The data come from the RNA Mapping Database (RMDB), library POS240. This 307-nucleotide RNA was probed chemically with 2A3. Conditions: 150 mM KOAc, 10 mM MgCl2 and 150 mM bicine (pH 8.5), 24 C. For 2A3, 1,053 sequencing reads were counted.

RNA sequence: GGGAACGACUCGAGUAGAGUCGAAAAGAGCGACGUACGCGUCGCUCACGCAUACUACGGUAUGCGAGCCUUCGGUGACGAAGGCAGGUCGGCUACGGCCGACCACAUAGUCGGUGACGACUAUGACAGUUCGGCCAUCCUACGGCGGAAACUCCUUAACUCGUUCCGAAUUAAGAAGAGAAGCGCCGUCAGGCCCCGCCAGUACUGCGAUCGGAGACGUCGUGGGAACACGGGGUGCCGAACCUUUACAAGCUCUACGGAGCUUGACUCGCCACUUCGGUGGCGAGAAAAGAAACAACAACAACAAC
Reactivity to 2A3 in 0.01 (KOAc 150mM, MgCl2 10mM, bicine 150mM(pH8.5), 24C), signal-to-noise 1, nucleotides 027 to 266: g000a000g000c000g000a000c030g000u060a060c300g000c020g140u000c000g020c000u000c000a010c030g000c000a000u000a000c010u000a010c250g090g000u020a000u010g000c030g010a040g000c000c000u000u000c000g080g000u130g000a030c000g000a040a000g010g010c010a000g000g000u010c000g000g000c000u050a030c230g110g000c020c000g000a010c000c000a040c000a000u000a000g000u000c020g050g090u160g030a060c000g010a000c000u000a000u030g080a080c040a020g020u000u000c000g000g000c000c020a060u030c060c000u000a000c000g000g000c030g000g070a060a050a020c010u000c000c000u000u010a000a000c020u000c020g240u300u250c140c160g030a020a000u020u000a000a000g030a080a040g030a060g070a210a140g140c000g030c030c020g000u050c080a000g000g000c010c000c020c010g000c040c000a010g000u000a000c000u000g030c000g060a100u300c080g200g150a150g050a100c000g030u000c020g000u010g000g010g020a000a000c000a000c000g000g010g000g020u020g000c000c000g000a000a000c000c010u090u170u050a110c000a010a020g000c000u030c000u000a030c170g050g000a000g050c000u000u000g010a010